[RMDB]
Source information
Structure probing data (2A3 and DMS) for a 177-nucleotide construct. The RNA was probed in 150 mM KOAc, 10 mM MgCl2 and 150 mM bicine (pH 8.5) at 24 C. Reactivities are given for positions 27 through 126.
RNA sequence: GGGAACGACUCGAGUAGAGUCGAAAAACUGAGGCAGGUACGCCUGCCUCAGAUGCGGAAGUUUUCCUCGGUAGUUAACUGCAGUCAGUUCCAAUAAAAUUCGACAGUUAGCUGCCGAGGGACAUAAUACAUAAAACUUUUUCGAAAGUUUUAUGUAAAAAGAAACAACAACAACAAC
Reactivity to 2A3 in 0.01 (KOAc 150mM, MgCl2 10mM, bicine 150mM(pH8.5), 24C), signal-to-noise 6, nucleotides 027 to 126: a000c000u000g000a000g010g000c000a010g010g020u050a030c210g060c050c000u000g000c000c000u000c000a000g000a000u040g030c060g100g060a100a140g030u010u000u080u080c010c010u000c000g000g000u000a000g010u000u000a000a000c000u040g050c070a060g030u060c030a030g050u140u120c070c040a070a070u280a220a140a050a050u170u110c060g020a010c010a010g000u000u000a000g000c000u000g000c000c010g000a000g000g000g000a000c000a000u190a070a040
Reactivity to DMS in 0.01 (KOAc 150mM, MgCl2 10mM, bicine 150mM(pH8.5), 24C), signal-to-noise 6, nucleotides 027 to 126: a110c000u000g010a020g010g010c000a010g000g030u010a070c270g010c000c000u000g010c000c000u010c010a000g010a030u020g010c210g010g010a120a200g010u010u010u000u010c010c000u000c000g000g010u000a010g010u010u000a000a010c000u000g000c170a110g010u010c060a060g010u020u000c030c050a120a110u060a080a100a040a050u010u030c110g020a110c000a010g000u000u000a010g010c010u000g000c000c010g000a010g000g000g010a010c110a030u000a100a100
2A3 adducts were read by reverse transcription with SuperScript II with manganese.